[RMDB]
RNA sequence: GGGAACGACUCGAGUAGAGUCGAAAAGAUAUGGACAGCGUAGUGGCGAAGAACACGUUGGGUCGGAAACGACCCACCGUGGGAGCCAUCACGCUGUCCUAAGUCAAACUUUGCCUUCGGGCAAAGAGUUACAAAAUUUGUUCGCAAAUUUUGUAACAAAAGAAACAACAACAACAAC
Reactivity to DMS in 0.01 (KOAc 150mM, MgCl2 10mM, bicine 150mM(pH8.5), 24C), signal-to-noise 5, nucleotides 027 to 126: g020a060u010a300u000g000g010a020c000a010g000c000g040u000a050g040u010g000g000c000g010a110a190g000a170a220c000a000c000g010u000u000g000g010g010u000c000g000g010a110a100a280c010g010a020c000c010c000a000c020c010g020u000g000g000g020a120g030c000c000a000u000c060a010c000g020c000u000g000u000c000c000u000a010a050g010u000c020a160a130a200c000u000u000u000g000c000c000u000u020c230g030g000g000c010a010a000a010g010a150
Reactivity to 2A3 in 0.01 (KOAc 150mM, MgCl2 10mM, bicine 150mM(pH8.5), 24C), signal-to-noise 3, nucleotides 027 to 126: g010a010u060a020u150g000g000a010c010a010g010c000g020u040a030g010u080g000g000c050g210a300a020g040a070a020c000a000c010g000u010u000g010g000g000u000c010g010g000a090a110a040c020g010a000c020c000c000a000c010c000g000u000g000g010g010a020g020c010c000a000u030c010a000c010g010c010u000g000u000c000c000u000a000a000g000u000c000a010a030a090c000u000u000u020g000c000c000u070u110c300g080g000g000c010a000a000a000g010a020
This 177-nucleotide RNA was probed chemically with DMS and 2A3. 2A3 adducts were read by reverse transcription with SuperScript II with manganese. The reactions ran in a buffer of 150 mM KOAc, 10 mM MgCl2 and 150 mM bicine (pH 8.5), at 24 C. As a SHAPE reagent, 2A3 marks flexible, mostly unpaired nucleotides at the ribose 2'-OH. It was measured as part of the RMDB library TTRDES. For 2A3, 15,301 sequencing reads were counted.